Chemical mapping of a 177-nucleotide RNA with 2A3. The reactions ran in a buffer of 150 mM KOAc, 10 mM MgCl2 and 150 mM bicine (pH 8.5), at 24 C. It was measured as part of the RMDB library RFM100.

RNA sequence: GGGAACGACUCGAGUAGAGUCGAAAAAGCUACGUACGCGUAGCAAUGUGUCCUGCCAGUGGUUUUACCCUAUGGUAGGUUACAUCAUGCUGUUCUACCACAGGGUAGAACCACGGACAGGAUACAACUUUCUGGGAUGCUUCGGCAUCCCAGAAAGAAAAGAAACAACAACAACAAC
Reactivity to 2A3 in 0.01 (KOAc 150mM, MgCl2 10mM, bicine 150mM(pH8.5), 24C), signal-to-noise 1, nucleotides 027 to 126: a000g000c000u020a020c000g040u030a020c300g000c000g100u000a000g000c000a000a020u050g000u000g020u000c010c010u000g000c000c000a060g000u000g000g000u000u000u000u000a000c000c000c000u000a010u000g000g000u000a000g000g100u080u080a010c000a010u080c030a080u250g070c020u010g030u030u000c000u010a000c000c000a030c000a020g000g000g000u000a000g000a000a000c000c000a000c000g000g000a000c000a000g000g000a000u000a000c000a030a080